An RNA of 207 nucleotides, treated with DMS and 2A3 and read out base by base. Reactivities are given for positions 27 through 156. 2A3 adducts were read by reverse transcription with SuperScript II with manganese. The reactions ran in a buffer of 150 mM KOAc, 10 mM MgCl2 and 150 mM bicine (pH 8.5), at 24 C. The DMS profile rests on 8,979 reads.

RNA sequence: GGGAACGACUCGAGUAGAGUCGAAAAGGCGAAUAGACUUAGGCAGUGACUGCCAUAAGGAGGAUUUCUGGGCAGUCACGGAGGAGAGGGAGCAUAGGUUUCAUUCAGCGUGAAGUCUAGCCUCCUGGGUGUUCUCACUGGGGAAAGACUGUCACUAAGGAUUAUAAAUGUUCGCAUUUAUAAUCCUAAAAGAAACAACAACAACAAC
Reactivity to DMS in 0.01 (KOAc 150mM, MgCl2 10mM, bicine 150mM(pH8.5), 24C), signal-to-noise 3, nucleotides 027 to 156: g010g000c040g030a100a070u000a060g010a070c050u010u060a090g010g050c060a130g010u000g000a050c020u020g000c000c010a100u000a050a090g000g020a070g010g010a210u010u000u010c030u000g010g030g000c020a030g000u010c020a000c030g010g010a090g000g000a120g000a110g010g010g010a070g000c050a160u000a050g020g010u000u000u000c040a080u010u000c040a240g020c150g030u000g000a210a030g000u000c010u000a070g010c050c010u000c020c020u000g000g040g020u000g020u000u000c040u000c030a090c070u000g010g010g000g000a050a070a080g000a060c030u000g000u010c040a040c060u000a140
Reactivity to 2A3 in 0.01 (KOAc 150mM, MgCl2 10mM, bicine 150mM(pH8.5), 24C), signal-to-noise 5, nucleotides 027 to 156: g050g020c040g040a040a050u070a070g030a050c060u110u080a050g050g020c060a030g010u000g020a010c010u010g000c010c000a080u150a090a040g040g020a020g070g060a120u060u210u020c050u100g030g000g000c000a000g000u000c010a000c010g000g000a020g010g030a030g000a020g010g010g010a030g000c020a080u070a060g050g000u030u060u060c040a060u090u050c040a060g080c040g070u010g010a000a000g010u020c010u040a040g020c010c000u040c000c010u040g000g040g010u070g060u160u040c070u030c040a040c030u040g000g000g010g030a030a040a010g020a010c020u110g050u170c010a000c050u030a060